Chemical mapping of a 177-nucleotide RNA with DMS and 2A3.
Conditions: 150 mM KOAc, 10 mM MgCl2 and 150 mM bicine (pH 8.5), 24 C.
[RMDB]
RNA sequence: GGGAACGACUCGAGUAGAGUCGAAAAGGAAACUUGUUCGCAAGUUUCCAAAGAACGCUGCAUCGCAAAGCGAGGCGGCGAGAGCGGCCAUACGCGAAGAAAAAACAAAUGGGUUCGCCCAUUUGAACAUCCCGAUUUAGUUCGCUAAAUCGGGAUGAAAAGAAACAACAACAACAAC
Reactivity to DMS in 0.01 (KOAc 150mM, MgCl2 10mM, bicine 150mM(pH8.5), 24C), signal-to-noise 2, nucleotides 027 to 126: g010g010a010a000a000c000u000u010g000u010u000c200g000c030a030a010g020u000u000u000c000c000a010a050a080g000a210a150c010g010c000u000g010c010a050u000c040g040c010a170a160a220g010c010g010a020g020g020c000g000g000c000g000a030g000a150g000c100g020g010c040c150a090u000a070c080g020c020g050a150a070g050a010a020a060a080a120a070c000a010a010a000u020g000g000g100u010u010c300g010c010c000c010a000u000u000u000g000a090a110
Reactivity to 2A3 in 0.01 (KOAc 150mM, MgCl2 10mM, bicine 150mM(pH8.5), 24C), signal-to-noise 1, nucleotides 027 to 126: g000g010a010a000a000c000u000u030g020u070u040c090g020c100a020a020g000u020u010u040c000c010a020a010a000g010a130a000c000g000c000u000g010c010a020u000c000g010c080a250a170a130g040c000g020a010g000g030c080g000g010c010g010a020g020a020g000c030g050g050c020c080a120u120a180c060g010c030g070a090a140g060a070a160a030a030a000a010c010a000a010a000u020g020g000g000u020u020c100g030c050c000c000a000u010u000u020g010a000a020
It was measured as part of the RMDB library M2PK50.